Record summary: This 207-nucleotide RNA was probed chemically with 2A3 and DMS. It was measured as part of the RMDB library OK3TST. DMS adducts were read by reverse transcription with MarathonRT. Values cover nucleotides 27 to 156. The reactions ran in a buffer of 150 mM KOAc, 10 mM MgCl2 and 150 mM bicine (pH 8.5), at 24 C.
RNA sequence: GGGAACGACUCGAGUAGAGUCGAAAAGUUCGUGGAACAUGCAGCACAUUGAGCUGCUUAGACGCUGUAAAAAUGGACAAACGAAAUAUUAAGAUAGAUUCUAAGAUUUCCUCAUGUGAAUUCACUCCCAAUUUUUACCGUUUUACGGAUACUGCUGACGUUAUCUUGACUUCGGUCAAGAUAACGUAAAAGAAACAACAACAACAAC
Reactivity to 2A3 in 0.01 (KOAc 150mM, MgCl2 10mM, bicine 150mM(pH8.5), 24C), signal-to-noise 3, nucleotides 027 to 156: g020u010u050c010g030u030g030g020a050a020c020a090u110g000c000a010g010c000a030c030a150u170u230g050a040g010c010u010g020c000u020u000a010g000a010c070g000c100u030g000u000a000a040a000a020a170u080g060g030a050c050a070a130a020c100g070a040a030a030u170a050u140u150a100a100g040a050u110a020g140a140u150u020c010u070a030a070g030a110u040u080u010c000c010u030c060a050u090g010u020g080a090a130u140u080c030a020c050u070c000c000c000a030a040u080u030u000u020u070a070c040c020g000u000u030u060u130a020c010g000g010a030u070a080c030u070g090c060u100g060
Reactivity to DMS in 0.01 (KOAc 150mM, MgCl2 10mM, bicine 150mM(pH8.5), 24C), signal-to-noise 1, nucleotides 027 to 156: g000u000u000c020g010u020g020g010a060a120c050a150u000g000c020a060g060c000a070c120a270u000u020g040a220g000c030u000g000c010u000u000a070g010a100c060g030c070u020g010u000a020a040a060a090a040u000g000g010a170c070a060a060a150c080g020a090a040a010u000a030u000u000a090a100g000a140u000a150g000a170u000u010c020u000a060a070g000a080u000u010u000c020c020u000c050a090u010g010u000g000a070a160u020u010c130a070c050u010c000c000c040a030a050u000u010u000u000u000a140c000c040g030u010u000u010u000a040c010g010g000a130u000a070c050u010g020c040u020g040